[RMDB]
Chemical mapping of a 207-nucleotide RNA with 2A3 and DMS. DMS adducts were read by reverse transcription with MarathonRT. Source: RMDB library OK3TST, as collected in RNAgym. For DMS, 1,597 sequencing reads were counted. Conditions: 150 mM KOAc, 10 mM MgCl2 and 150 mM bicine (pH 8.5), 24 C.
RNA sequence: GGGAACGACUCGAGUAGAGUCGAAAAUAUAGACUGCAAUUAGUUUUUUGGAAUGAAAUACAGACAAAGCCAUAACAUCUAUAGAACUACAUAUUACCCUACAAUAUUGUCUGAUACAAAACAGUCUGGAAAUAUUCUUACAGCGAAAUUGCAAAUAACCCUGAGUAUAGUUCGCUAUACUCAGGGUAAAAGAAACAACAACAACAAC
Reactivity to 2A3 in 0.01 (KOAc 150mM, MgCl2 10mM, bicine 150mM(pH8.5), 24C), signal-to-noise 2, nucleotides 027 to 156: u140a020u020a020g110a060c080u020g000c000a000a020u050u010a020g020u000u050u080u050u110u180g030g020a030a030u050g030a120a030a020u080a040c010a000g020a020c010a060a080a030g000c090c000a050u080a050a030c020a070u080c050u110a110u010a200g060a120a010c010u050a040c060a050u070a050u050u100a080c040c000c020u060a050c030a080a070u050a050u100u040g040u000c040u020g020a040u050a120c050a000a070a100a000c040a000g000u000c000u000g000g000a040a040a000u070a020u030u000c000u030u070a020c040a000g000c010g030a000a030a050u020u020g020c040a000a060a090u060a070
Reactivity to DMS in 0.01 (KOAc 150mM, MgCl2 10mM, bicine 150mM(pH8.5), 24C), signal-to-noise 1, nucleotides 027 to 156: u000a150u000a120g000a090c040u000g040c020a060a110u000u000a150g000u000u000u000u000u000u000g000g010a140a010u000g000a030a080a180u000a150c030a030g000a070c020a010a020a100g050c050c150a070u000a100a000c020a080u000c080u000a140u010a070g000a080a080c030u000a090c050a090u030a100u000u000a070c000c030c060u000a030c090a070a070u000a050u000u000g010u000c030u000g030a150u030a250c070a060a100a140a090c080a030g020u000c000u000g010g010a060a050a130u000a030u000u010c050u000u020a010c060a040g020c020g000a010a040a050u000u000g000c030a030a070a070u000a080